[RMDB]
RNA sequence: GGGAACGACUCGAGUAGAGUCGAAAAAACUUGCCGUGCAGGCGCUUCUUGAUGGUGCAAGCGUUGUGCGUCAUGUACUCCAGCUUGCGGCUGGUGAACGCGAACUGCUGCUUGGCGAUGAUCAGGGUGUCGAUCACCUUGAACGGUCGCGGCGGCGUGACAAAAGAACUUUCGAGUUCUUUUGUCAAAAAGAAACAACAACAACAAC
Reactivity to 2A3 in 0.01 (KOAc 150mM, MgCl2 10mM, bicine 150mM(pH8.5), 24C), signal-to-noise 3, nucleotides 027 to 156: a010a010c020u030u040g000c000c000g000u000g000c010a040g220g060c020g020c000u080u010c020u100u210g190a170u140g080g130u100g040c090a010a020g000c010g020u020u010g010u000g010c010g030u080c030a020u100g020u040a040c000u010c010c000a020g000c000u060u190g050c050g070g010c010u030g000g040u050g050a070a030c070g000c020g100a120a070c070u080g000c000u000g010c020u030u130g170g000c000g010a010u050g020a030u030c000a000g010g000g000u020g050u070c070g120a210u290c010a010c000c000u020u000g010a020a020c090g110g000u010c010g000c000g000g000c000g000g010c030g000
Reactivity to DMS in 0.01 (KOAc 150mM, MgCl2 10mM, bicine 150mM(pH8.5), 24C), signal-to-noise 2, nucleotides 027 to 156: a080a030c010u000u000g000c050c030g040u000g020c060a120g050g030c040g010c020u000u000c030u000u000g020a110u020g010g000u010g010c040a050a070g020c020g030u000u000g020u010g010c030g000u000c100a090u000g010u000a080c040u000c000c000a080g030c040u000u000g020c070g030g000c030u010g010g020u000g020a090a040c050g020c030g010a060a090c050u020g010c000u000g020c030u000u000g070g030c000g010a040u000g020a190u000c010a040g030g020g030u000g010u010c270g040a290u010c000a010c020c010u010u000g020a020a070c070g000g000u000c010g030c030g020g020c040g010g000c030g010